[RMDB]
The record gives the reactivity of an RNA of 177 nucleotides to DMS and 2A3. DMS adducts were read by reverse transcription with MarathonRT. Conditions: 150 mM KOAc, 10 mM MgCl2 and 150 mM bicine (pH 8.5), 24 C. The data come from the RNA Mapping Database (RMDB), library TTRDEL. The DMS profile rests on 1,208 reads.
RNA sequence: GGGAACGACUCGAGUAGAGUCGAAAAGAUAUGGAUCCCAUGGGAGUUCGUCGGAAACGACGAGUGCAUCGAUCAUGUGGAUCCUAAGUCAAACAAGUUUGUAGUUCUUCGGAACUACAAACUUGAACCGCAAUGAAAAGUUCGCUUUUCAUUGCGGAAAAGAAACAACAACAACAAC
Reactivity to DMS in 0.01 (KOAc 150mM, MgCl2 10mM, bicine 150mM(pH8.5), 24C), signal-to-noise 2, nucleotides 027 to 126: g000a070u000a300u000g000g000a010u000c020c000c020a020u030g000g000g030a140g010u000u000c000g020u000c000g000g000a120a030a180c000g010a000c020g000a040g010u000g030c070a300u000c120g000a170u000c000a000u000g030u000g050g000a000u000c000c000u000a040a070g020u000c060a140a050a190c020a000a000g000u000u000u010g010u020a010g000u000u000c000u000u020c190g010g000a030a000c000u020a000c000a000a000a000c000u000u000g000a080a110
Reactivity to 2A3 in 0.01 (KOAc 150mM, MgCl2 10mM, bicine 150mM(pH8.5), 24C), signal-to-noise 1, nucleotides 027 to 126: g020a010u070a040u180g000g000a000u000c010c000c000a000u000g000g040g010a110g020u020u000c000g010u000c040g000g040a070a050a050c010g000a000c010g010a010g010u170g000c030a270u280c110g110a100u090c010a000u030g190u300g010g000a000u000c000c000u000a020a000g020u000c050a110a090a100c000a020a000g000u010u010u000g020u010a020g030u000u000c000u040u060c300g020g000a010a000c000u000a000c000a020a000a000c000u000u010g000a010a030